[RMDB]
RNA sequence: GGGAACGACUCGAGUAGAGUCGAAAAGUGCGAGGUCUUCCUAGCCUUUCGAUGGUUGAAGUCGAACAUGAAACCUGUAAGUUAGGACAGUUACGAAGUUGUAGCUAGUACCAACUACCUCGCUGAAGAUAUAGAGGCAAUUCGUUGUUUCUAUAUCAAAAGAAACAACAACAACAAC
Reactivity to DMS in 0.01 (KOAc 150mM, MgCl2 10mM, bicine 150mM(pH8.5), 24C), signal-to-noise 9, nucleotides 027 to 126: g010u020g000c000g000a010g000g010u000c080u000u000c000c010u000a030g010c070c060u000u010u010c090g010a040u010g010g010u020u020g010a150a190g010u010c110g010a060a140c300a080u020g010a110a030a030c050c030u000g000u020a070a100g010u000u000a040g010g000a050c240a020g010u000u000a020c060g010a110a120g010u040u020g010u000a020g000c040u000a070g010u000a170c050c030a060a040c030u000a150c000c000u000c000g010c000u000g000a120a090
Reactivity to 2A3 in 0.01 (KOAc 150mM, MgCl2 10mM, bicine 150mM(pH8.5), 24C), signal-to-noise 9, nucleotides 027 to 126: g120u090g000c000g000a000g010g000u010c020u020u000c020c020u020a060g010c010c000u040u090u050c050g070a070u100g070g090u110u140g090a070a030g040u050c050g030a050a020c040a080u160g040a060a030a040c010c020u040g040u120a030a030g010u020u040a030g010g010a020c020a020g000u010u030a020c060g080a300a120g080u260u300g010u060a000g010c000u030a060g010u050a160c000c010a000a010c000u020a010c000c000u000c000g000c020u030g040a050a030
Chemical mapping of a 177-nucleotide RNA with DMS and 2A3. Reactivities are given for positions 27 through 126. Conditions: 150 mM KOAc, 10 mM MgCl2 and 150 mM bicine (pH 8.5), 24 C. DMS adducts were read by reverse transcription with MarathonRT. For 2A3, 36,048 sequencing reads were counted.